[RMDB]
RNA sequence: GGGAACGACUCGAGUAGAGUCGAAAAAGCUUGCCGCGGGAUGAUGAACACCGAGAAGUCUGCGCACGCUGGCUUGGGUCCGCUAUGCAGCGCACCGACGGUACUCCGGACCGUAUCAACUCCAAAUACUCAACCGCGUGCAUCGCAGCAGGCGCUGAUAGGCAGUAGUAUUCGUACUACUGCCUAUAAAAGAAACAACAACAACAAC
Reactivity to 2A3 in 0.01 (KOAc 150mM, MgCl2 10mM, bicine 150mM(pH8.5), 24C), signal-to-noise 5, nucleotides 027 to 156: a000g010c030u040u040g010c010c010g010c020g040g020g010a060u110g000a050u070g040a120a060c060a090c150c070g010a040g020a140a010g060u020c020u050g000c020g000c040a000c020g000c080u170g020g000c030u010u030g030g000g000u080c060c030g000c040u060a110u300g070c080a040g000c010g000c040a040c010c050g030a020c010g000g040u070a200c030u030c050c090g060g020a030c000c030g010u040a080u180c050a060a090c030u020c060c030a010a080a090u130a070c010u020c040a010a020c020c000g000c000g000u010g010c010a010u090c030g000c010a010g000c000a000g000g020c030g000c030u030g010
Reactivity to DMS in 0.01 (KOAc 150mM, MgCl2 10mM, bicine 150mM(pH8.5), 24C), signal-to-noise 3, nucleotides 027 to 156: a150g020c030u000u010g020c010c030g020c050g020g020g030a060u000g010a080u000g010a110a090c030a300c040c030g000a140g010a150a250g010u010c000u000g010c040g030c020a040c030g020c010u000g050g030c040u000u000g020g030g030u000c040c030g040c030u000a070u010g020c020a150g030c020g050c050a110c070c060g000a070c030g020g020u000a040c060u010c070c030g000g000a080c050c030g020u000a150u010c050a060a090c100u010c040c030a050a060a140u010a060c070u000c030a080a070c020c020g000c030g020u000g000c030a110u000c050g000c040a020g010c020a080g010g020c020g030c050u000g010